[RMDB]
RNA sequence: GGGAACGACUCGAGUAGAGUCGAAAAGCACAAGACUUCGAACAUUAUAGCAGUUAGUAGUUGCCUAAACCUAUUGCAAUAUAUGGGACAGUAGAGGUCGCAAGCCUAUACUGUGCGGUGAACAUUCAAAAGGGAUGGUACUUCGGUACCAUCCCAAUCUCCAAUUAAGGUUCGCCUUAAUUGGAGAAAAAGAAACAACAACAACAAC
Reactivity to DMS in 0.01 (KOAc 150mM, MgCl2 10mM, bicine 150mM(pH8.5), 24C), signal-to-noise 3, nucleotides 027 to 156: g000c020a100c030a100a090g010a080c050u000u010c040g020a140a160c090a100u010u000a080u010a150g020c040a070g000u000u010a080g020u000a070g030u000u000g010c010c040u000a050a040a040c020c000u010a030u010u000g010c060a090a200u010a110u010a080u000g020g000g020a090c020a020g010u000a040g000a050g070g040u000c050g020c300a070a290g010c020c000u000a030u000a020c020u000g010u000g010c070g010g030u010g000a050a110c120a080u000u010c070a060a070a090a120g030g010g010a030u000g030g020u000a000c000u010u000c300g040g020u000a040c000c000a010u000c000c000c010a000a000
Reactivity to 2A3 in 0.01 (KOAc 150mM, MgCl2 10mM, bicine 150mM(pH8.5), 24C), signal-to-noise 3, nucleotides 027 to 156: g020c020a030c040a060a080g080a090c070u050u080c160g110a240a070c040a130u140u120a150u160a110g080c080a040g020u030u060a040g030u060a010g010u010u030g030c020c000u080a090a090a090c000c000u040a050u050u030g020c020a060a000u020a010u000a060u240g010g020g030a010c000a000g010u010a010g000a010g030g000u100c030g010c060a020a020g000c000c000u040a030u010a010c000u000g020u020g080c030g020g010u060g090a050a040c030a030u150u300c070a190a020a030a040g000g020g000a000u000g000g020u010a000c000u010u030c160g070g000u000a000c000c000a010u000c010c000c000a010a000